[RMDB]
Structure probing data (2A3 and DMS) for a 177-nucleotide construct. DMS adducts were read by reverse transcription with MarathonRT. Reactivities are given for positions 27 through 126. Conditions: 150 mM KOAc, 10 mM MgCl2 and 150 mM bicine (pH 8.5), 24 C. As a SHAPE reagent, 2A3 marks flexible, mostly unpaired nucleotides at the ribose 2'-OH.
RNA sequence: GGGAACGACUCGAGUAGAGUCGAAAAAGCCAGGGUCUCGAACCGGAUUAGAUACCCGGGUAGUCCUGGCUGUAAACAAUGCUCGCUAGGUAUGUCACGCGCCAUGAGCACGUGAUGUGCCGUAGGGAAAGACCUUUUUGUUCGCAAAAAGGUCUUUAAAAGAAACAACAACAACAAC
Reactivity to 2A3 in 0.01 (KOAc 150mM, MgCl2 10mM, bicine 150mM(pH8.5), 24C), signal-to-noise 3, nucleotides 027 to 126: a000g010c010c010a020g040g000g010u150c040u020c120g060a170a080c000c010g000g000a000u030u080a040g060a230u150a110c000c000c000g010g000g010u040a030g020u020c000c000u000g000g040c010u000g010u000a010a000a000c030a000a120u140g070c030u040c080g120c070u000a000g000g020u020a010u000g000u000c000a000c020g030c000g000c050c010a240u300g040a070g080c000a000c020g000u000g000a010u000g000u000g000c050c010g010u010a010g010g010g050
Reactivity to DMS in 0.01 (KOAc 150mM, MgCl2 10mM, bicine 150mM(pH8.5), 24C), signal-to-noise 5, nucleotides 027 to 126: a010g000c000c000a020g010g000g000u030c050u010c140g000a120a300c010c010g000g000a030u010u010a120g000a190u030a120c150c010c000g000g000g020u040a090g000u010c000c000u000g010g000c000u010g000u010a040a120a120c190a100a070u030g000c030u000c000g010c050u000a260g000g030u010a010u000g010u000c000a010c000g000c050g000c010c010a120u020g000a220g030c000a010c000g010u010g010a000u000g010u000g000c000c000g010u000a050g010g000g010